[RMDB]
RNA sequence: GGGAACGACUCGAGUAGAGUCGAAAAUGAGCUGUUCGCAGCUCAAAAAAGAUAUGGACUUCUCCCCACCUCCGUGAACUACGCUGAGGGAUCGGAAACGAUCUGUAGGCGCACGGAGAGGAAGUCCUAAGUCAAAAAACAUGCGUUCGCGCAUGAAUAUCAUAAUAUUGUUCGCAAUAUUAUGAUAAAAAGAAACAACAACAACAAC
Reactivity to 2A3 in 0.01 (KOAc 150mM, MgCl2 10mM, bicine 150mM(pH8.5), 24C), signal-to-noise 7, nucleotides 027 to 156: u090g010a010g000c010u020g000u170u140c280g010c120a010g000c010u010c000a050a070a010a010a010a030g120a070u170a080u100g000g000a000c010u020u020c010u120c060c040c010c010a020c000c000u000c000c000g010u010g030a090a070c100u140a050c250g000c010u020g000a090g020g090g000a000u000c000g010g050a070a030a070c020g000a000u000c090u270g020u030a010g000g010c000g000c010a000c000g000g010a000g000a000g010g000a000a000g000u000c000c000u020a100a030g060u050c070a040a010a020a080a050a110c000a000u060g010c000g020u050u080c300g000c000g000c130a000u010g010a010a030
Reactivity to DMS in 0.01 (KOAc 150mM, MgCl2 10mM, bicine 150mM(pH8.5), 24C), signal-to-noise 3, nucleotides 027 to 156: u000g000a030g030c000u010g030u000u000c300g050c010a050g010c010u050c000a000a030a050a140a060a140g010a110u010a190u000g020g020a040c010u000u010c010u000c220c050c020c040a300c100c010u010c030c020g050u000g010a100a240c050u010a100c030g030c000u000g000a270g000g000g000a020u000c000g000g000a170a080a260c020g030a010u000c000u000g010u000a300g000g030c000g000c000a010c010g030g030a030g000a290g010g010a040a030g010u000c010c000u000a020a090g010u010c020a010a050a150a140a080a200c000a020u000g020c010g050u000u000c300g020c000g030c000a010u000g000a120a130
Annotation:
Source: RMDB library RNAMAK, as collected in RNAgym. An RNA of 207 nucleotides, treated with 2A3 and DMS and read out base by base. Values cover nucleotides 27 to 156.